[RMDB]
RNA sequence: GGGAACGACUCGAGUAGAGUCGAAAAUGCCUAAUUCAAGGAAUUAGCGUGCCUUCAUGCUAAGGGUUUGAUAUCUGCUAAAACCCGGUGCAUUCAUUAAUGCAGGUUAAGCCAAAGGGAUGUCCCGAAAAGAACGCAAGGUUCGCCUUGCGUUCAACCUGAGGAAAUGGUUCGCCAUUUCCUCAGGAAAAGAAACAACAACAACAAC
Reactivity to DMS in 0.01 (KOAc 150mM, MgCl2 10mM, bicine 150mM(pH8.5), 24C), signal-to-noise 2, nucleotides 027 to 156: u000g000c030c010u000a060a070u020u010c080a130a130g000g030a090a060u000u000a050g040c050g060u010g020c010c090u010u000c060a060u000g000c030u020a300a270g020g010g030u000u000u000g010a180u000a050u000c080u000g010c120u010a190a020a010a040c020c000c010g000g040u000g030c020a060u000u000c110a060u020u000a060a080u010g000c030a010g020g070u000u010a030a080g030c040c020a050a140a150g010g050g010a110u000g000u000c030c000c010g010a040a080a090a230g010a040a000c000g010c000a000a010g060g030u000u000c300g050c010c000u010u000g000c000g030u000u000c000a020a040
Reactivity to 2A3 in 0.01 (KOAc 150mM, MgCl2 10mM, bicine 150mM(pH8.5), 24C), signal-to-noise 3, nucleotides 027 to 156: u110g000c010c010u040a040a060u080u080c140a090a100g090g000a110a100u000u010a030g030c070g090u030g030c020c050u050u100c070a030u060g000c020u050a040a020g000g000g010u000u020u000g030a030u040a110u160c060u100g060c040u060a020a010a010a010c000c000c010g030g000u000g000c010a030u010u110c010a040u050u280a140a030u140g000c020a000g000g070u070u100a090a010g000c020c050a110a080a000g020g000g010a050u150g140u210c000c000c000g040a060a070a020a030g020a000a000c000g000c000a000a000g020g010u020u050c180g070c070c000u000u020g000c000g000u010u000c000a000a000